[RMDB]
RNA sequence: GGGAACGACUCGAGUAGAGUCGAAAAAGAACGCGAGACGCGAACCUGUGAGUGGAAACCCGCUUUAUUCACUGGGGUCGACAGCUCUGGGGAGAGAAGGGAGGAUCGGAUGGGAAGAGUAUAUCCUUGGGAUAGGGUUUCGACCCUAUCAAAAGAAACAACAACAACAAC
Reactivity to 2A3 in 0.01 (KOAc 150mM, MgCl2 10mM, bicine 150mM(pH8.5), 24C), signal-to-noise 9, nucleotides 027 to 129: a020g060a050a010c040g020c050g050a060g040a080c060g020c020g050a040a050c000c010u050g020u040g050a030g010u040g000g040a070a040a040c010c020c000g060c050u090u140u110a140u110u110c080a060c150u080g010g000g000g040u030c020g030a050c030a030g020c010u020c030u070g010g000g010g000a030g010a000g000a020a030g020g000g000a020g000g010a020u040c040g020g020a020u050g020g000g020a010a020g020a020g040u040a030u030a020u110c020c000u040u070g060g000
Reactivity to DMS in 0.01 (KOAc 150mM, MgCl2 10mM, bicine 150mM(pH8.5), 24C), signal-to-noise 9, nucleotides 027 to 129: a040g030a060a070c100g010c080g020a070g020a110c090g000c070g010a040a070c000c020u020g020u000g010a030g040u020g000g000a070a110a110c040c030c020g030c110u020u030u030a060u030u030c070a060c070u050g030g000g010g020u000c020g020a080c140a090g020c050u020c040u000g010g000g010g000a050g010a040g040a030a030g020g010g010a080g020g020a010u010c050g040g000a090u020g000g000g030a050a040g020a030g030u000a080u010a070u040c040c010u010u030g010g000